[RMDB]
RNA sequence: GGGAACGACUCGAGUAGAGUCGAAAAAUUCGAUUUGAUGAAGGUGAUCCUCUUAUGACACAAUGAAGGGCAGUUAAAUUCCUUUAAUUUUACAAAACUCGGUGGAUCCGUGUGUCCGCCUGCCUGCCAUUGACUGUGACUUCGGUCACAGUCAAUGAAAAGAAACAACAACAACAAC
Reactivity to DMS in 0.01 (KOAc 150mM, MgCl2 10mM, bicine 150mM(pH8.5), 24C), signal-to-noise 2, nucleotides 027 to 126: a230u010u000c030g010a140u000u010u010g000a070u020g000a110a070g020g040u000g000a060u000c020c020u020c080u020u010a040u000g010a060c130a050c080a080a060u000g030a060a160g010g000g000c050a050g000u010u000a040a080a150u000u000c040c080u000u000u010a040a030u000u030u020u000a100c130a110a000a100a090c120u000c110g000g000u000g000g000a020u010c050c150g000u000g020u000g000u000c000c040g030c050c000u000g000c070c030u010g000c150
Reactivity to 2A3 in 0.01 (KOAc 150mM, MgCl2 10mM, bicine 150mM(pH8.5), 24C), signal-to-noise 1, nucleotides 027 to 126: a000u100u040c070g060a000u020u020u220g030a050u070g020a010a030g070g000u050g020a080u000c010c020u000c050u050u050a100u180g050a020c010a010c030a110a070u080g060a110a040g000g010g000c040a000g040u070u130a110a070a090u070u020c030c000u010u070u170a100a070u120u120u070u090a020c050a000a100a030a040c000u000c060g010g040u020g000g010a020u030c060c110g060u050g050u060g040u020c010c010g000c030c000u040g010c000c030u000g010c010

Structure probing data (DMS and 2A3) for a 177-nucleotide construct. For 2A3, 783 sequencing reads were counted. The RNA was probed in 150 mM KOAc, 10 mM MgCl2 and 150 mM bicine (pH 8.5) at 24 C.